[RMDB]
RNA sequence: GGGAACGACUCGAGUAGAGUCGAAAAAACCCGUUGAUUGAAAUUGAACCGUCCUGUUAUCGAAAGAUAGGCAGAAGAUACGAAAUGUGUGACAGCAUGGGAAGUAAAGGCAGACAGUGGUUCCCUUAAAAUCGUCGAAUCUUCGGAUUCGACGAAAGAACCUACUAUCGUUCGCGAUAGUAGGUUCAAAAGAAACAACAACAACAAC
Reactivity to DMS in 0.01 (KOAc 150mM, MgCl2 10mM, bicine 150mM(pH8.5), 24C), signal-to-noise 2, nucleotides 027 to 156: a130a110c000c000c000g040u010u020g010a130u000u020g020a110a250a140u010u000g000a120a090c010c010g000u000c040c010u000g010u000u000a070u000c040g000a170a080a180g010a050u000a020g020g020c020a100g010a040a080g010a140u000a080c060g000a050a150a100u020g000u000g000u010g020a140c110a150g030c010a130u000g000g000g000a040a090g050u020a060a030a070g010g020c020a090g020a080c020a070g020u000g010g000u000u000c010c020c050u020u000a060a040a090a120u010c010g030u010c000g010a000a000u000c010u000u010c260g040g000a070u000u000c000g010a000c010g000a000a020a050
This 207-nucleotide RNA was probed chemically with DMS.
For DMS, 2,313 sequencing reads were counted.
Conditions: 150 mM KOAc, 10 mM MgCl2 and 150 mM bicine (pH 8.5), 24 C.
The data come from the RNA Mapping Database (RMDB), library M2RFPK.